[RMDB]
RNA sequence: GGGAACGACUCGAGUAGAGUCGAAAACAGAGACAUCCUGGGCCAGGUACUGCAUACAGACUGAAGGAUGGACACUUAGAGUCAGCUCAAGCCAAUUUUGUGGCAUUAUAUGCUCCUGAUGAACAUGGAACUGACGAUACUUCGGUAUCGUCAGUUCAAAAGAAACAACAACAACAAC
Reactivity to DMS in 0.01 (KOAc 150mM, MgCl2 10mM, bicine 150mM(pH8.5), 24C), signal-to-noise 1, nucleotides 027 to 126: c040a140g000a100g010a120c030a050u000c000c010u000g000g000g000c000c010a100g070g000u050a080c100u000g000c120a110u130a090c070a070g000a100c130u000g000a030a050g020g000a130u020g010g020a150c070a040c130u000u000a050g000a040g000u000c030a010g060c030u000c180a090a080g010c090c020a040a130u010u000u000u000g000u000g000g000c080a120u010u040a090u000a150u000g000c000u000c000c000u000g000a050u020g000a050a150c040a070u050g000
Reactivity to 2A3 in 0.01 (KOAc 150mM, MgCl2 10mM, bicine 150mM(pH8.5), 24C), signal-to-noise 3, nucleotides 027 to 126: c050a000g120a000g000a090c060a040u020c000c020u070g030g110g010c060c000a060g080g000u090a080c000u050g030c080a140u070a160c030a040g130a120c000u060g030a030a000g040g000a010u040g020g080a000c040a000c020u040u050a050g000a000g180u030c020a010g000c010u020c050a090a020g050c020c050a110a140u210u120u140u180g170u040g020g000c000a000u040u140a120u060a090u160g030c000u010c050c000u060g100a110u130g060a060a010c060a210u220g070